[RMDB]
RNA sequence: GGGAACGACUCGAGUAGAGUCGAAAAUCAUGUUUGUUCGCAAACAUGAAAAGAAAGCACGAAUAUAAAAUAAAAGGGAAGGGAACGUGCACCCACCCAUAAAAACGCACGUGUUCGCACGUGCGAACCCAUAGAUAAACUUCGGUUUAUCUAUGGGAAAAGAAACAACAACAACAAC
Reactivity to 2A3 in 0.01 (KOAc 150mM, MgCl2 10mM, bicine 150mM(pH8.5), 24C), signal-to-noise 7, nucleotides 027 to 126: u020c000a000u000g000u000u000u010g060u040u050c150g000c130a000a000a010c000a000u010g010a010a070a000a020g060a020a060a010g000c010a000c010g100a240a010u230a030u070a130a080a040a030u190a030a120a030a040g010g010g020a080a110g020g000g000a090a040c000g000u010g000c000a050c000c010c000a010c000c000c010a030u180a050a100a010a010a010c010g000c000a000c000g000u000g030u040u050c240g020c070a000c000g000u000g000c000g000a000a010
Reactivity to DMS in 0.01 (KOAc 150mM, MgCl2 10mM, bicine 150mM(pH8.5), 24C), signal-to-noise 4, nucleotides 027 to 126: u000c000a000u000g010u010u000u000g020u000u010c200g020c010a000a000a000c000a010u000g010a010a080a100a130g000a060a060a090g020c000a000c000g000a230a110u010a100u000a040a020a050a060u010a050a040a150a090g010g000g000a110a060g010g000g000a060a070c020g020u010g000c010a300c000c000c020a150c000c000c010a140u010a050a020a050a060a080c030g010c000a000c000g010u000g010u000u000c200g010c000a010c000g010u000g010c000g000a010a010